This 177-nucleotide RNA was probed chemically with DMS.

RNA sequence: GGGAACGACUCGAGUAGAGUCGAAAAGAUAUGGAAUCGAUAGGGGUGUAAUGCAAGACAUGAUGGCGUAUCGGAAACGAUACCCCCAUCAACAGCUUGUCAUUACACCCCUAUCGAUUCCUAAGUCGUAUUAAAGUGACUUCGGUCACUUUAAUACAAAAGAAACAACAACAACAAC
Reactivity to DMS in 0.01 (KOAc 150mM, MgCl2 10mM, bicine 150mM(pH8.5), 24C), signal-to-noise 5, nucleotides 027 to 126: g010a090u010a300u010g000g000a010a000u000c000g010a040u000a000g000g000g010g030u000g000u010a000a010u000g000c030a020a000g000a060c110a300u010g010a000u000g030g050c300g010u010a020u000c010g000g000a040a180a240c000g000a000u000a000c010c070c260c030c020a010u000c000a010a050c300a180g000c010u010u000g000u010c010a010u010u000a020c000a000c010c010c000c010u000a000u000c000g000a000u000u000c000c000u000a020a040g010u010c120